[RMDB]
RNA sequence: GGGAACGACUCGAGUAGAGUCGAAAAAGCAAAUGAACUCAAUAUUUCUAUUGAACGUCAAUAUUUCAACCAAUUAUAUCGCUUCAAUAAUCAAGAUUUAAAGCAUCUUGAACAAGAAUUUGAUGUAACGUAUGGUAACGUUCGCGUUACCAUACGUAAAAGAAACAACAACAACAAC
Reactivity to 2A3 in 0.01 (KOAc 150mM, MgCl2 10mM, bicine 150mM(pH8.5), 24C), signal-to-noise 6, nucleotides 027 to 126: a000g220c120a090a080a080u180g020a080a020c030u010c030a020a030u080a060u100u230u090c130u050a030u000u070g010a050a030c060g030u020c060a050a040u040a080u120u110u090c060a100a080c020c030a030a020u210u050a080u020a030u120c030g030c090u060u010c030a060a100u090a060a080u020c000a000a000g010a040u010u110u220a090a130a000g070c020a000u000c000u010u010g040a060a080c040a060a040g070a030a030u060u060u110g060a060u060g070u080a060
Reactivity to DMS in 0.01 (KOAc 150mM, MgCl2 10mM, bicine 150mM(pH8.5), 24C), signal-to-noise 3, nucleotides 027 to 126: a150g010c110a040a050a040u000g030a130a070c080u000c010a010a020u000a040u000u030u040c090u030a000u000u020g000a010a060c210g010u000c060a030a050u010a110u000u000u020c110a050a120c140c000a020a140u000u010a000u000a030u000c020g030c300u000u000c000a030a010u040a100a150u000c000a000a000g000a020u000u010u060a070a120a230g070c300a020u000c000u000u000g000a050a020c210a100a060g000a020a020u000u050u000g000a000u000g040u000a050